Conditions: 150 mM KOAc, 10 mM MgCl2 and 150 mM bicine (pH 8.5), 24 C. The record gives the reactivity of an RNA of 207 nucleotides to DMS and 2A3. It was measured as part of the RMDB library OK3TST. Reactivities are given for positions 27 through 156.
RNA sequence: GGGAACGACUCGAGUAGAGUCGAAAAGUAUAAACAACGCAGGUACGGCGACAGCACUCAAGGUGGUUCAAUAUGAGGGUGGAGGCGGUGGCCAGACGCACAAUGUCGCUGAAUUUUGGGACUUUCAGACGUUGGCCAUGGUGAUUGAUCCAGAGGGCAAGGUAGUGUAGUUCGCUACACUACCUUGAAAAGAAACAACAACAACAAC
Reactivity to DMS in 0.01 (KOAc 150mM, MgCl2 10mM, bicine 150mM(pH8.5), 24C), signal-to-noise 2, nucleotides 027 to 156: g010u000a060u010a080a050a130c010a040a060c040g000c030a080g000g040u000a080c070g000g030c040g010a100c090a070g010c040a060c040u000c090a090a100g000g040u010g020g000u010u000c060a090a070u000a080u020g000a100g020g000g020u000g000g010a090g040g020c020g010g050u000g020g010c010c010a070g010a050c020g020c030a140c090a060a070u020g000u000c030g040c050u010g020a060a150u010u000u010u010g020g050g000a040c050u020u010u000c040a200g030a120c020g030u010u000g030g040c020c010a090u010g010g020u010g000a120u000u000g010a170u010c020c030a130g000a090g000g020g030
Reactivity to 2A3 in 0.01 (KOAc 150mM, MgCl2 10mM, bicine 150mM(pH8.5), 24C), signal-to-noise 3, nucleotides 027 to 156: g070u050a050u090a190a110a010c080a060a030c060g010c040a050g000g050u090a050c070g030g000c030g020a010c000a020g040c020a010c050u040c060a050a030g020g020u030g040g010u100u060c010a040a050u100a070u230g040a040g000g040g000u060g010g000a040g040g030c100g000g000u020g000g000c000c000a040g020a080c030g000c010a020c040a080a100u060g000u020c020g040c170u030g050a140a150u080u100u140u140g040g010g030a050c000u010u050u000c030a040g030a100c010g000u010u030g000g000c000c010a020u030g030g030u020g010a110u060u030g000a010u030c000c010a020g040a040g070g000g000